Overview
This 177-nucleotide RNA was probed chemically with 2A3 and DMS. It was measured as part of the RMDB library OK1LIB.

RNA sequence: GGGAACGACUCGAGUAGAGUCGAAAAAGAUCUGCCCUUGUGUGAGAAUACUUUUAGGUACAAGGCGAGGUACACGCAGUAUACAUGCCACUUGUGUGAGAAUACUUUUAGGUACAAGGCGAGGUACGUACUCAAGUCGGUUCGCCGACUUGAGUACAAAAGAAACAACAACAACAAC
Reactivity to 2A3 in 0.01 (KOAc 150mM, MgCl2 10mM, bicine 150mM(pH8.5), 24C), signal-to-noise 2, nucleotides 027 to 126: a000g130a120u020c030u080g050c010c030c000u030u010g020u000g000u060g060a100g020a090a180u120a160c020u050u100u030u300a130g080g030u040a000c020a040a020g050g000c060g000a020g000g020u040a000c090a040c060g030c010a000g010u040a010u030a070c040a030u200g030c000c020a020c110u100u080g030u000g010u010g080a100g060a150a020u110a050c010u040u070u030u070a140g000g060u040a060c030a080a030g010g010c020g010a000g030g000u060a040c030
Reactivity to DMS in 0.01 (KOAc 150mM, MgCl2 10mM, bicine 150mM(pH8.5), 24C), signal-to-noise 1, nucleotides 027 to 126: a070g020a090u000c050u060g100c070c000c020u000u000g000u080g030u060g040a060g000a060a160u000a000c060u000u000u020u000a100g030g100u030a060c090a040a150g030g020c150g000a040g000g000u000a000c060a180c010g000c090a000g020u020a060u030a180c080a130u020g010c050c000a030c080u000u020g000u000g000u010g000a050g000a040a080u000a090c000u000u000u000u040a090g000g000u000a040c050a020a060g000g020c000g000a050g000g010u010a000c190
The RNA was probed in 150 mM KOAc, 10 mM MgCl2 and 150 mM bicine (pH 8.5) at 24 C.
For 2A3 the reverse transcriptase was SuperScript II with manganese.